Chemical mapping of a 177-nucleotide RNA with 2A3. Conditions: 150 mM KOAc, 10 mM MgCl2 and 150 mM bicine (pH 8.5), 24 C.

RNA sequence: GGGAACGACUCGAGUAGAGUCGAAAAUUAAGCGACCCGUCUUGAAACACGGACCAAGGAGUCUAACAUGCUUGCGAGUAUUAGGGUGUUGAAACCCGAAUGCGUAAUGAAAGUGAAUUUCAGAUGUCCUGACUGACGUAUUCGUACGUCAGUCAGGAAAAGAAACAACAACAACAAC
Reactivity to 2A3 in 0.01 (KOAc 150mM, MgCl2 10mM, bicine 150mM(pH8.5), 24C), signal-to-noise 1, nucleotides 027 to 126: u120u020a020a050g130c010g120a040c010c000c050g020u000c050u000u130g070a260a020a010c050a030c050g000g000a020c010c000a030a300g120g010a050g010u000c020u070a010a020c050a050u130g070c030u000u030g000c050g010a020g040u040a070u020u110a030g000g000g000u000g100u090u080g080a030a060a010c000c000c000g010a000a000u060g000c000g050u060a120a050u090g090a010a190a010g020u020g080a110a150u000u000u010c000a000g000a050u030g080u070